[RMDB]
RNA sequence: GGGAACGACUCGAGUAGAGUCGAAAACUUAUCAACGGGGAACAUAUCGAUGCGGCGAUUCUCGACGUCUAUCUCGGUGACGAGCUGGUAUUUGCCGUCGCCGAUGAGCUGGAGGCGCGAGAUAUCAACUUCGUCUUUGCCACCGGCUACGACCCCGCGUCCGUCGCAAAUUCGUUUGCGACGGACGAAAAGAAACAACAACAACAAC
Reactivity to 2A3 in 0.01 (KOAc 150mM, MgCl2 10mM, bicine 150mM(pH8.5), 24C), signal-to-noise 1, nucleotides 027 to 156: c040u240u230a110u300c020a130a060c090g000g000g000g000a000a110c050a010u250a000u120c040g000a020u020g000c000g020g030c060g030a020u000u020c020u000c050g300a290c000g020u070c040u020a030u000c000u000c000g040g000u000g000a000c000g050a080g030c010u060g120g120u300a220u080u280u070g000c000c000g000u040c020g000c020c030g030a050u070g020a010g070c050u050g200g070a000g010g000c000g000c020g000a020g000a020u070a030u060c020a040a030c000u020u040c040g050u010c080u090u250u040g000c000c020a120c110c000g020g020c030u060a040c070g050a020c000c000c000c000g010
Structure probing data (2A3) for a 207-nucleotide construct. Source: RMDB library OK3TST, as collected in RNAgym. Conditions: 150 mM KOAc, 10 mM MgCl2 and 150 mM bicine (pH 8.5), 24 C.